[RMDB]
RNA sequence: GGGAACGACUCGAGUAGAGUCGAAAACACAUCCCCAACCCGCGGGCCGGCUGUUCUUCUUUUCCUUUGCUCGUCUUCCCCGGUCAGCCUCCCGAGUUCCUCUUCUUCUUCCCUGCUGAGGUUCUUCGUCACGACCUCUUCGGAGGUCGUAAAAGAAACAACAACAACAAC
Reactivity to 2A3 in 0.01 (KOAc 150mM, MgCl2 10mM, bicine 150mM(pH8.5), 24C), signal-to-noise 2, nucleotides 027 to 129: c090a000c010a030u060c010c000c000c000a000a020c010c010c000g010c000g000g030g010c030c030g040g000c040u060g010u080u020c000u080u100c030u030u020u020u060c010c020u020u070u080g010c010u000c010g030u000c050u000u000c040c000c000c000g000g010u030c010a010g020c000c000u020c020c010c000g010a000g000u020u010c000c000u010c000u090u000c000u010u000c000u010u030c020c000c000u000g000c010u010g010a020g000g080u010u010c000u000u020c000g060u030c020
Reactivity to DMS in 0.01 (KOAc 150mM, MgCl2 10mM, bicine 150mM(pH8.5), 24C), signal-to-noise 4, nucleotides 027 to 129: c200a180c160a180u020c000c000c000c000a070a110c070c030c050g000c120g000g000g000c050c050g000g000c100u020g020u020u020c090u020u040c060u010u000u010u010c000c000u020u030u030g030c010u020c040g050u030c040u010u030c020c010c000c020g000g000u000c000a090g000c070c030u010c030c010c040g020a170g020u030u010c030c020u000c040u020u000c030u000u000c050u060u000c040c020c010u000g000c030u010g030a090g020g000u000u000c050u000u000c060g030u060c120